About this RNA
Structure probing data (2A3) for a 207-nucleotide construct. For 2A3, 516 sequencing reads were counted. It was measured as part of the RMDB library ARCHII.
[RMDB]
RNA sequence: GGGAACGACUCGAGUAGAGUCGAAAAUCUGGGUGUGCUAUUGCUGGCCCGCCCGUUCCAAGUUGCGUAGUGGAUCACCUGGGGCCUAUGCGAAAGCUGGGCCUCACGGUCCAUAAUGUGGCAGGCACAGCGUGAGGCUGGCUUCACAGAGCAGCGACGCCUUGUACUAGUUCGCUAGUACAAGGCGAAAAGAAACAACAACAACAAC
Reactivity to 2A3 in 0.01 (KOAc 150mM, MgCl2 10mM, bicine 150mM(pH8.5), 24C), signal-to-noise 1, nucleotides 027 to 156: u050c060u080g010g000g020u000g050u020g000c020u040a140u250u250g120c270u130g020g020c030c070c000g020c010c000c020g000u000u010c010c000a020a120g020u020u020g070c020g110u180a060g010u050g000g000a010u000c050a030c080c000u050g080g000g040g000c000c010u090a160u290g000c000g020a070a000a000g000c020u000g000g010g000c000c000u000c000a000c000g000g000u010c000c000a000u020a010a160u020g040u010g000g030c080a040g090g000c020a040c000a300g030c040g140u280g200a040g300g040c000u010g020g010c000u000u030c000a020c000a000g050a000g060c000a010g030c020g050a000